[RMDB]
RNA sequence: GGGAACGACUCGAGUAGAGUCGAAAAGCCGUGACGCAGCCAGUUGGCCAGCAGUUGGCUGGAGAUGCGCAGGGUGGCGCGGUCUUCCAUCAGACCGACGUCGUUGAUGUCCGGCACCUUGGAGCAAGAUAUAGGGGACGUUCGCGUCCCCUAUAUCAAAAGAAACAACAACAACAAC
Reactivity to 2A3 in 0.01 (KOAc 150mM, MgCl2 10mM, bicine 150mM(pH8.5), 24C), signal-to-noise 2, nucleotides 027 to 126: g020c010c000g170u180g010a040c000g030c040a000g070c040c000a040g020u070u060g150g030c090c040a070g030c020a070g130u190u170g160g000c020u020g030g010a130g010a080u040g000c060g060c100a050g160g070g000u110g000g030c010g000c000g000g010u000c000u080u010c110c030a140u160c060a050g010a000c000c000g040a090c020g020u000c020g030u000u070g060a140u180g040u020c020c040g050g000c030a030c000c000u060u160g080g010a010g080c060a100a030
Reactivity to DMS in 0.01 (KOAc 150mM, MgCl2 10mM, bicine 150mM(pH8.5), 24C), signal-to-noise 3, nucleotides 027 to 126: g030c010c020g010u020g010a080c060g010c030a100g030c010c020a140g000u000u010g010g030c000c040a050g030c140a170g010u000u010g000g000c010u000g010g010a200g010a080u000g010c050g030c060a110g010g010g000u010g020g000c010g020c000g000g000u000c010u000u020c080c170a080u020c180a040g010a040c010c000g000a120c030g030u000c020g020u010u020g010a100u010g000u010c040c020g010g000c010a090c030c000u030u010g010g010a110g010c130a090a100